This 177-nucleotide RNA was probed chemically with DMS and 2A3.
RNA sequence: GGGAACGACUCGAGUAGAGUCGAAAAUAAAAGGACAACGAAAUGCGCCUCUGCAACCUCCAGCUGGUGUUGUCUGCGAACCUGAUCAAAACUACCGAGUUUGAUCAGGCCAAUGCAGAGAAAAAAACUUGGAGUAAGUAUUCGUACUUACUCCAAGAAAAGAAACAACAACAACAAC
Reactivity to DMS in 0.01 (KOAc 150mM, MgCl2 10mM, bicine 150mM(pH8.5), 24C), signal-to-noise 3, nucleotides 027 to 126: u010a030a080a070a090g000g000a040c020a030a050c040g000a060a120a130u000g010c100g030c090c010u000c020u000g000c010a080a090c060c020u000c050c040a090g010c050u000g010g030u010g030u000u010g000u000c000u000g010c050g000a100a120c010c000u000g000a000u000c000a000a010a010a040c020u000a280c250c180g000a110g010u010u000u000g000a010u000c000a020g010g010c050c060a020a120u010g010c000a000g000a060g020a010a000a020a090a100a120a070
Reactivity to 2A3 in 0.01 (KOAc 150mM, MgCl2 10mM, bicine 150mM(pH8.5), 24C), signal-to-noise 1, nucleotides 027 to 126: u080a000a070a050a060g060g000a030c030a050a010c100g060a030a130a090u110g000c020g050c030c000u010c000u000g000c030a080a030c000c020u020c000c000a030g000c040u080g000g050u040g040u020u140g000u000c010u010g000c020g030a090a090c020c000u000g000a000u000c000a020a050a020a080c030u180a170c080c120g120a080g160u000u000u020g000a000u000c000a000g000g000c020c010a010a000u070g000c010a000g000a000g000a190a070a030a030a000a000a030

Notes:
High 2A3 reactivity points to a flexible backbone, as in loops and unpaired stretches. Conditions: 150 mM KOAc, 10 mM MgCl2 and 150 mM bicine (pH 8.5), 24 C.